[RMDB]
RNA sequence: GGGAACGACUCGAGUAGAGUCGAAAAAUGCUAAUCAGCUGUGGGUUAGUCAGGACCUAACGCGUACCCAAACGGGGAAGUGGAUGGACAACAGGUUAAUAUUCCUGUACUACCUUAUACUGCGAUGAAACAUACCGCAAUUCGUUGCGGUAUGUUUAAAAGAAACAACAACAACAAC
Reactivity to 2A3 in 0.01 (KOAc 150mM, MgCl2 10mM, bicine 150mM(pH8.5), 24C), signal-to-noise 4, nucleotides 027 to 126: a000u150g000c040u030a060a030u100c020a070g030c050u020g030u070g030g060g010u040u030a020g010u030c030a020g000g090a060c000c000u020a140a050c020g000c020g090u110a030c000c000c000a100a190a150c150g000g000g000g000a080a020g000u030g020g020a100u110g050g020a030c010a150a000c030a140g020g080u100u120a100a070u080a170u190u070c000c000u000g020u020a000c000u010a000c010c010u060u060a100u050a080c040u020g040c040g080a060u090g090
Reactivity to DMS in 0.01 (KOAc 150mM, MgCl2 10mM, bicine 150mM(pH8.5), 24C), signal-to-noise 6, nucleotides 027 to 126: a080u030g010c060u010a090a070u010c020a080g030c080u010g020u000g000g000g000u010u000a020g010u000c060a040g000g000a090c080c020u010a100a220c020g000c010g010u030a300c000c000c010a050a130a160c220g010g000g000g010a140a210g010u000g000g000a170u020g000g000a090c120a110a070c080a040g000g000u000u000a060a100u000a140u030u020c000c010u000g000u010a040c060u000a060c030c010u000u010a050u010a090c050u000g010c070g000a070u030g010
Structure probing data (2A3 and DMS) for a 177-nucleotide construct. The reactions ran in a buffer of 150 mM KOAc, 10 mM MgCl2 and 150 mM bicine (pH 8.5), at 24 C. Source: RMDB libraries RFM100 and RFMREP, as collected in RNAgym.